[RMDB]
RNA sequence: GGGAACGACUCGAGUAGAGUCGAAAAAGAACUAGCGAUUGUAAAAGGGUGUUUGCGCUAAGAUAUGGAAUUAGCGCAAAUAGGUCCGAAUUCCUUGAUAACAUUUCGGACAACCGCGCUAAAACAAGUCUCAAGUGAUAUUCGUAUCACUUGAGACAAAAGAAACAACAACAACAAC
Reactivity to DMS in 0.01 (KOAc 150mM, MgCl2 10mM, bicine 150mM(pH8.5), 24C), signal-to-noise 3, nucleotides 027 to 126: a080g000a130a110c160u000a060g010c020g020a150u000u020g020u000a090a090a060a120g010g000g010u010g010u000u010u000g000c000g000c010u000a010a010g010a130u020a130u010g020g020a080a170u000u010a010g010c000g000c000a000a010a010u000a060g030g010u000c000c000g010a020a020u010u000c110c060u000u000g040a130u040a050a130c180a050u010u000u010c010g000g000a010c000a160a090c040c020g000c010g010c010u000a020a050a030a090c200a060a090
Reactivity to 2A3 in 0.01 (KOAc 150mM, MgCl2 10mM, bicine 150mM(pH8.5), 24C), signal-to-noise 3, nucleotides 027 to 126: a010g040a040a010c020u010a010g000c000g070a100u090u300g090u300a040a080a090a090g050g050g000u040g010u000u010u010g000c010g000c010u010a020a030g030a080u180a100u300g150g040a050a110u050u000a000g000c000g000c040a020a000a000u010a010g000g000u000c000c000g020a010a010u050u060c000c020u040u100g070a050u050a100a080c050a110u050u000u050c020g000g000a010c020a010a000c020c010g030c000g000c010u030a060a090a030a030c040a100a040
Annotation
The record gives the reactivity of an RNA of 177 nucleotides to DMS and 2A3. The RNA was probed in 150 mM KOAc, 10 mM MgCl2 and 150 mM bicine (pH 8.5) at 24 C. Source: RMDB library M2PK90, as collected in RNAgym. The 2A3 profile rests on 2,271 reads. DMS adducts were read by reverse transcription with MarathonRT.